[RMDB]
RNA sequence: GGGAACGACUCGAGUAGAGUCGAAAAUCUAGUGUCCUUGUGACGUGGGGGUUCGACUCCCUUCACCCGCACCAAUUUUUGCGGAAGUAGUUCAGUGGUAGAACACCACCUUGCCAAGGUGGGGGUCCCUAUGACCACGAUUCGUCGUGGUCAUAGGAAAAGAAACAACAACAACAAC
Reactivity to DMS in 0.01 (KOAc 150mM, MgCl2 10mM, bicine 150mM(pH8.5), 24C), signal-to-noise 4, nucleotides 027 to 126: u010c040u000a070g020u010g030u000c000c040u010u010g000u000g020a020c050g020u010g010g010g010g010g010u000u000c060g010a080c020u000c000c090c050u000u010c080a110c150c020c010g000c020a070c300c220a060a090u010u000u000u010u000g000c020g000g010a180a070g000u010a070g020u000u000c030a100g000u010g010g030u000a110g000a080a050c070a190c010c000a010c010c010u000u000g020c200c210a090a070g000g010u000g000g000g000g000g020u010c030
Reactivity to 2A3 in 0.01 (KOAc 150mM, MgCl2 10mM, bicine 150mM(pH8.5), 24C), signal-to-noise 4, nucleotides 027 to 126: u030c010u010a030g130u030g020u140c030c040u110u230g080u180g070a030c040g010u080g000g030g000g000g010u020u000c000g020a030c010u050c010c020c000u080u060c010a020c010c000c020g000c010a040c010c110a170a200u120u170u100u190u150g010c020g000g020a040a030g020u080a000g010u030u020c070a040g030u030g170g100u160a080g050a100a000c000a010c010c010a010c000c000u040u120g210c100c080a040a020g010g000u010g000g020g010g010g020u040c030